[RMDB]
RNA sequence: GGGAACGACUCGAGUAGAGUCGAAAAAUGAACGCUGAGCUCUCCACAGUAUGCUGUGUGCUUGAACCACAGUCAAAAGGAAAGUGUUCAGGCCUGUGAGCAAAAGGUAUGUCUUACCUGUCAAUCACCGUUAACUGUGUUUCGACACAGUUAACGGAAAAGAAACAACAACAACAAC
Reactivity to 2A3 in 0.01 (KOAc 150mM, MgCl2 10mM, bicine 150mM(pH8.5), 24C), signal-to-noise 2, nucleotides 027 to 126: a000u070g010a030a000c030g010c040u020g010a000g070c000u000c000u000c040c010a050c030a070g140u150a110u250g070c000u040g000u020g020u070g010c020u060u160g030a040a010c050c000a010c030a050g060u090c030a040a090a000a080g180g020a220a100a000g040u020g000u090u010c000a010g010g020c000c020u100g040u010g030a000g010c000a070a000a030a000g090g000u060a080u200g100u000c020u030u030a030c030c000u100g110u130c070a060a090u080c010a010
Reactivity to DMS in 0.01 (KOAc 150mM, MgCl2 10mM, bicine 150mM(pH8.5), 24C), signal-to-noise 2, nucleotides 027 to 126: a040u010g040a060a040c080g030c050u000g000a180g010c100u000c090u010c030c020a120c100a060g010u010a090u000g010c000u010g030u010g000u000g020c120u020u010g030a070a050c060c030a010c030a020g000u000c090a050a100a190a130g010g020a020a070a050g030u010g010u000u000c030a000g000g010c020c090u030g040u000g010a030g020c050a060a100a130a030g000g000u020a030u010g010u010c130u000u000a060c040c000u000g000u010c120a090a130u010c100a090